[RMDB]
RNA sequence: GGGAACGACUCGAGUAGAGUCGAAAAUCUUUCUCAUCGGGGACCUCAUCGGGGACGUCACGGCCAUCGCCAUCUGCACUACCCGCCUGAUUGCUCUCCACUUCCAAAGAUGCGCCGGCCAUCAAGCACCUCUCAACACCCCUCUUCGCCUCCGCAACAAUCUUACCAUGUUCGCAUGGUAAGAUUGAAAAGAAACAACAACAACAAC
Reactivity to DMS in 0.01 (KOAc 150mM, MgCl2 10mM, bicine 150mM(pH8.5), 24C), signal-to-noise 1, nucleotides 027 to 156: u020c000u020u000u020c030u000c030a150u000c080g030g000g070g010a040c060c050u010c030a080u000c020g060g050g010g040a110c070g000u000c040a110c070g040g020c050c050a040u020c140g060c040c000a040u010c080u000g000c010a080c050u010a150c020c020c050g000c060c030u010g000a080u000u010g040c050u010c000u000c030c000a080c020u000u000c040c020a110a110a110g020a090u000g020c010g000c030c160g000g030c010c020a080u000c030a080a140g000c040a040c020c000u000c030u010c030a080a100c050a110c020c010c010c030u000c020u000u000c040g030c010c020u000c030c020g010c030a120a140
Reactivity to 2A3 in 0.01 (KOAc 150mM, MgCl2 10mM, bicine 150mM(pH8.5), 24C), signal-to-noise 2, nucleotides 027 to 156: u020c000u000u100u030c020u030c040a090u150c090g060g000g000g000a070c010c040u030c030a050u060c030g020g040g000g000a080c050g000u080c060a020c050g040g000c030c030a170u130c060g030c030c020a090u050c060u120g020c090a010c070u080a080c030c000c030g000c010c040u050g020a110u050u100g000c010u010c010u020c030c030a040c040u130u060c040c020a090a070a080g040a030u040g020c050g000c020c020g030g000c010c000a060u050c030a060a000g030c010a080c020c010u030c010u020c000a040a100c010a090c090c020c000c020u000c000u010u020c020g020c020c000u050c030c010g000c010a020a020

Structure probing data (DMS and 2A3) for a 207-nucleotide construct.
The reactions ran in a buffer of 150 mM KOAc, 10 mM MgCl2 and 150 mM bicine (pH 8.5), at 24 C.